The record gives the reactivity of an RNA of 177 nucleotides to 2A3 and DMS.
For 2A3 the reverse transcriptase was SuperScript II with manganese.
Reactivities are given for positions 27 through 126.
The DMS profile rests on 1,364 reads.
The data come from the RNA Mapping Database (RMDB), library TTRDES.
The RNA was probed in 150 mM KOAc, 10 mM MgCl2 and 150 mM bicine (pH 8.5) at 24 C.

[RMDB]
RNA sequence: GGGAACGACUCGAGUAGAGUCGAAAAGAUAUGGAUGAUAUUGACAUGUCGUUAACAUCGGAAACGAUGUUACGACAACAGCAAUGAUCAUCCUAAGUCAAAACAUCUACCCUUCGGGGUAGAUGAAUCCAGAUUGAAGGUUCGCCUUCAAUCUGGAAAAAGAAACAACAACAACAAC
Reactivity to 2A3 in 0.01 (KOAc 150mM, MgCl2 10mM, bicine 150mM(pH8.5), 24C), signal-to-noise 2, nucleotides 027 to 126: g020a010u040a040u100g000g000a000u010g000a000u030a010u000u010g060a110c180a300u300g030u020c010g060u130u300a010a000c000a000u000c010g000g060a020a010a010c010g010a000u010g000u000u000a000c010g070a020c000a000a030c100a010g140c030a010a040u240g080a090u120c000a010u000c010c000u030a060a000g030u030c020a000a000a130a290c010a000u000c010u020a020c000c010c040u010u040c300g140g000g000g000u000a000g000a000u000g010a020a050
Reactivity to DMS in 0.01 (KOAc 150mM, MgCl2 10mM, bicine 150mM(pH8.5), 24C), signal-to-noise 2, nucleotides 027 to 126: g000a010u000a230u030g000g000a010u000g000a020u000a030u010u000g000a020c120a300u030g000u000c000g000u000u000a020a040c000a010u000c000g000g000a070a040a100c000g010a000u000g020u000u000a000c000g010a090c000a060a030c250a180g000c010a000a010u000g000a040u000c010a020u000c000c000u010a000a080g010u050c000a070a080a140a170c000a000u000c000u010a010c000c000c000u000u030c300g030g020g000g020u000a000g020a000u000g000a080a080